[RMDB]
RNA sequence: GGGAACGACUCGAGUAGAGUCGAAAAUCAAAUAUAAAAGCUGAGAUGAGCUCAGCAAGGGUAUUUUUCGAGAGAUGUGCUCUCGUUCCCUAUCCCUUGCUCCGGAAACGGUAGCUUUUACAAAAAACAUUACCAGUGGAUUCGUCCACUGGUAAUGAAAAGAAACAACAACAACAAC
Reactivity to 2A3 in 0.01 (KOAc 150mM, MgCl2 10mM, bicine 150mM(pH8.5), 24C), signal-to-noise 2, nucleotides 027 to 126: u010c000a010a090a000u270a050u070a090a060a000a000g000c020u010g000a030g010a200u190g150a040g200c010u000c020a010g010c010a010a000g000g000g000u020a030u040u050u010u010u010c010g000a010g010a000g020a080u220g090u240g300c000u000c010u010c000g000u000u010c000c030c000u020a040u090c000c000c000u000u000g010c010u000c010c000g020g060a060a060a050c020g000g000u060a010g010c030u010u010u030u090a070c120a020a130a010a030a010a010
Reactivity to DMS in 0.01 (KOAc 150mM, MgCl2 10mM, bicine 150mM(pH8.5), 24C), signal-to-noise 2, nucleotides 027 to 126: u020c140a070a090a110u010a170u010a010a000a020a030g030c010u010g000a000g010a300u000g000a220g020c030u000c010a000g000c000a020a000g010g000g020u010a080u000u000u000u000u000c020g000a010g000a010g010a260u000g050u000g000c010u000c000u000c010g020u000u000c000c000c000u000a300u000c000c000c000u000u000g010c010u000c000c000g000g010a090a100a070c010g000g000u000a020g000c000u000u000u010u010a020c120a000a020a140a080a050a120
Structure probing data (2A3 and DMS) for a 177-nucleotide construct. 2A3 adducts were read by reverse transcription with SuperScript II with manganese. It was measured as part of the RMDB library M2PK90.